[RMDB]
Chemical mapping of a 207-nucleotide RNA with 2A3. The RNA was probed in 150 mM KOAc, 10 mM MgCl2 and 150 mM bicine (pH 8.5) at 24 C.
RNA sequence: GGGAACGACUCGAGUAGAGUCGAAAAGCAACGCAAAGCCGCGGCAAGUGGAGUUAGCGAGAAGAGACUAGGCUUUGGUUUGUUCAAGUGAAGCGGUCACCAAUCAGGUGUGGUAGUUACCGUAAAAAUAACCGCUCUUUGUUCGCAAAGAGCGGAACAGACUCUGGAAGUUCGCUUCCAGAGUCUGAAAAGAAACAACAACAACAAC
Reactivity to 2A3 in 0.01 (KOAc 150mM, MgCl2 10mM, bicine 150mM(pH8.5), 24C), signal-to-noise 1, nucleotides 027 to 156: g000c000a020a080c070g000c100a070a090a070g010c050c020g040c020g040g050c030a020a040g020u050g150g060a090g090u100u200a030g030c040g060a020g020a100a020g050a000g020a010c010u010a080g000g070c030u030u050u020g050g100u020u020u090g070u050u100c050a050a060g000u030g100a100a010g050c000g010g000u040c000a000c030c000a030a170u100c050a030g060g060u060g050u010g130g000u030a070g010u070u030a000c000c020g050u090a000a000a000a000a120u050a050a060c000c000g000c000u000c000u000u000u000g010u020u080c070g000c110a000a000a000g010a010g030c010g010g000a000a000